Background: Chemical mapping of a 177-nucleotide RNA with 2A3 and DMS. Conditions: 150 mM KOAc, 10 mM MgCl2 and 150 mM bicine (pH 8.5), 24 C. For DMS the reverse transcriptase was MarathonRT.
RNA sequence: GGGAACGACUCGAGUAGAGUCGAAAACUGAUAUGCUUCGGCAUAUCAGAAAAUAAGGUGCAAUAAGAUCAGGAAACUGAAAACUGCAGCACUAGCAGAAAAAAACAGACGUCUUCGGACGUCUGAACAUGUAUAGAACGUUCGCGUUCUAUACAUGAAAAGAAACAACAACAACAAC
Reactivity to 2A3 in 0.01 (KOAc 150mM, MgCl2 10mM, bicine 150mM(pH8.5), 24C), signal-to-noise 4, nucleotides 027 to 126: c000u000g010a000u000a000u020g000c020u030u070c190g100g010c000a010u000a000u000c000a000g020a010a100a000a000u160a040a050g040g000u010g000c020a040a100u080a160a050g020a050u040c010a000g000g070a080a040a070c010u020g010a020a070a040a120c010u020g020c030a040g000c010a010c020u040a050g020c080a040g150a060a150a020a000a000a000a000c010a010g000a000c000g000u000c000u050u050c160g110g000a000c000g000u000c000u010g000a000a010
Reactivity to DMS in 0.01 (KOAc 150mM, MgCl2 10mM, bicine 150mM(pH8.5), 24C), signal-to-noise 5, nucleotides 027 to 126: c000u010g000a000u000a000u000g010c010u000u020c210g030g020c000a010u010a010u000c000a010g000a040a050a070a080u000a100a130g010g010u000g000c000a130a070u000a070a030g000a110u000c000a010g000g000a140a130a190c010u010g000a010a040a100a070c020u000g020c300a080g000c000a000c010u000a070g030c090a120g020a010a000a070a070a090a100a120c000a010g000a010c010g010u000c000u000u010c190g020g010a000c000g010u000c000u000g010a030a110